[RMDB]
RNA sequence: GGGAACGACUCGAGUAGAGUCGAAAAGGCAGCACACUGAAUCCGGACGACGAGCCGCGCGAACCGGACGAGCGUUCGCCGUCGAGCGGCGAUAACCGCACGCUCGGCCCGAGCGAUUCGUCGGACAACCCCUCACUAGUUUCGACUAGUGAGGGGUAAAAGAAACAACAACAACAAC
Reactivity to DMS in 0.01 (KOAc 150mM, MgCl2 10mM, bicine 150mM(pH8.5), 24C), signal-to-noise 4, nucleotides 027 to 126: g020g030c040a030g020c040a050c110a070c060u000g010a110a150u010c070c060g000g020a160c070g020a050c030g010a050g010c050c010g010c040g010c040g000a050a070c040c030g000g000a030c000g000a020g010c020g000u000u000c000g010c080c060g020u010c130g010a120g010c010g000g000c000g020a110u010a050a080c270c020g000c020a090c000g010c000u000c010g000g000c010c090c000g010a040g010c000g000a050u000u000c020g000u000c000g000g010a100c130a160
Reactivity to 2A3 in 0.01 (KOAc 150mM, MgCl2 10mM, bicine 150mM(pH8.5), 24C), signal-to-noise 2, nucleotides 027 to 126: g030g000c010a010g010c020a020c010a010c060u070g050a050a060u040c030c030g040g010a010c030g020a000c010g000a010g020c010c000g000c020g000c030g050a070a040c040c000g020g040a020c010g010a000g010c020g020u010u020c000g010c030c000g030u060c080g060a120g040c000g000g000c000g000a010u070a040a100c080c000g020c060a090c040g000c000u010c000g000g000c020c010c000g020a020g010c010g060a090u030u030c000g000u010c000g010g010a020c010a010